[RMDB]
Notes:
An RNA of 177 nucleotides, treated with 2A3 and DMS and read out base by base. It was measured as part of the RMDB library RFM100. The RNA was probed in 150 mM KOAc, 10 mM MgCl2 and 150 mM bicine (pH 8.5) at 24 C. For DMS the reverse transcriptase was MarathonRT.
RNA sequence: GGGAACGACUCGAGUAGAGUCGAAAAAUGUCGACCAAGAACAGUUUCAGGUGGGGAGUUUGGCUGGGGCGGCACAUUUGUUAAAAGAUAACGCAAGUGUCCAAAGGCAGGCUCAGUGAGAACAGAAAGUCUCCUCUAGAUUCGUCUAGAGGAGACUAAAAGAAACAACAACAACAAC
Reactivity to 2A3 in 0.01 (KOAc 150mM, MgCl2 10mM, bicine 150mM(pH8.5), 24C), signal-to-noise 1, nucleotides 027 to 126: a000u030g050u030c000g000a150c000c000a000a000g020a160a090c000a100g000u000u110u120c020a030g020g050u040g040g130g020g040a000g020u090u060u060g120g000c080u020g000g000g040g040c000g000g000c020a020c000a030u000u000u000g030u000u020a060a000a010a010g090a120u060a050a020c030g000c000a010a010g000u000g000u070c010c000a020a050a040g080g000c030a000g070g000c000u030c000a000g010u110g070a060g010a140a000c020a000g100a030a100
Reactivity to DMS in 0.01 (KOAc 150mM, MgCl2 10mM, bicine 150mM(pH8.5), 24C), signal-to-noise 2, nucleotides 027 to 126: a050u020g020u000c110g040a140c020c030a200a160g000a050a040c070a050g010u000u030u000c010a120g000g010u000g040g000g000g050a030g010u000u000u030g020g040c040u040g000g000g000g000c050g000g050c010a000c030a030u020u010u020g000u000u030a080a030a130a080g010a060u000a040a140c170g000c040a020a060g000u000g000u020c020c050a010a110a150g000g000c020a060g000g000c000u000c080a040g030u000g000a010g000a100a080c100a110g030a080a100